[RMDB]
RNA sequence: GGGAACGACUCGAGUAGAGUCGAAAAAUAUUGAGAACAAUCACCAAAAGCGAGAUAGCGAGGUUGAUAAACUGUCUCAGGAAGUCAAGAUGCUCAAUAGCCACCUAAGCUUAAAGGAGCGGAAAUUACAAGAUCUCGAAGCUAAACUUCUCAAGUCCAGUCUCUCAGGAUUCGUCCUGAGAGACUGAAAAGAAACAACAACAACAAC
Reactivity to 2A3 in 0.01 (KOAc 150mM, MgCl2 10mM, bicine 150mM(pH8.5), 24C), signal-to-noise 1, nucleotides 027 to 156: a000u260a060u070u040g010a000g010a160a040c040a070a040u070c010a010c070c030a020a060a090a030g080c030g000a070g000a140u070a020g010c000g000a030g020g030u100u110g060a030u080a060a110a060c020u010g030u070c000u000c060a010g070g000a070a050g020u010c040a020a080g010a100u110g000c000u000c000a040a060u040a140g000c020c000a060c020c090u020a010a040g010c000u000u010a110a040a040g070g000a020g010c000g160g000a020a080a000u050u050a080c040a100a070g010a110u010c080u110c070g010a040a040g000c000u020a160a000a070c000u080u000c000u040c040a000a000g000u000c020